[RMDB]
RNA sequence: GGGAACGACUCGAGUAGAGUCGAAAAGGGUGCCCUAAGGUCGGCUCAGGCGGGUCAGGAAUCCGCCGUAGAGUGCAAGGGCAAAAGCCGGCCUGACUGGACCCGUAACAGAGGCGGGUCCAGCCGCGAAAGCGUGGCCUAGCGAACCCCUGUGCCUGCCUGAUACUAAGUUCGCUUAGUAUCAGGCAAAAGAAACAACAACAACAAC
Reactivity to 2A3 in 0.01 (KOAc 150mM, MgCl2 10mM, bicine 150mM(pH8.5), 24C), signal-to-noise 1, nucleotides 027 to 156: g010g000g030u030g030c010c020c060u110a160a120g050g060u110c090g060g000c010u010c050a000g000g000c000g000g000g010u040c030a170g140g000a300a050u000c000c000g000c000c010g010u070a020g000a000g020u010g060c030a010a030g020g010g060c040a160a160a000a000g000c020c020g010g000c000c010u070g000a090c000u000g020g000a000c000c000c000g020u050a100a030c090a110g090a090g160g000c000g000g000g000u000c000c000a000g000c000c000g000c010g010a100a010a010g010c040g030u070g000g000c000c000u000a040g010c030g060a090a090c000c000c010c000u000g030u030g040c000c010u020
Structure probing data (2A3) for a 207-nucleotide construct. For 2A3, 1,133 sequencing reads were counted. As a SHAPE reagent, 2A3 marks flexible, mostly unpaired nucleotides at the ribose 2'-OH. Values cover nucleotides 27 to 156. It was measured as part of the RMDB library PDB130.